[RMDB]
RNA sequence: GGGAACGACUCGAGUAGAGUCGAAAACUCAAGCCAUAAAUUGGUAAUUCCUUCUUCUUCAACGGUUUGGACGAGCCGACUCGCUUCGCCUGCUACCCCGUGUCGCACCCUCACGGUGCGUGGCGUUCGCCCUACAUGGUUUCGACCAUGUAGGGCGAAAAGAAACAACAACAACAAC
Reactivity to 2A3 in 0.01 (KOAc 150mM, MgCl2 10mM, bicine 150mM(pH8.5), 24C), signal-to-noise 2, nucleotides 027 to 126: c000u010c020a020a000g010c010c000a090u170a190a260a030u190u190g010g020u060a080a080u110u080c000c080u040u060c010u130u060c050u080u110c030a080a060c000g040g060u060u020u030g110g070a070c020g020a000g000c010c010g070a040c020u000c000g010c080u080u010c020g100c000c000u030g010c020u060a060c000c040c000c000g000u000g000u040c010g090c000a040c000c000c030u030c000a060c030g010g000u040g000c000g000u000g030g000c020g000u030u010
Conditions: 150 mM KOAc, 10 mM MgCl2 and 150 mM bicine (pH 8.5), 24 C. An RNA of 177 nucleotides, treated with 2A3 and read out base by base. The data come from the RNA Mapping Database (RMDB), library RFM100.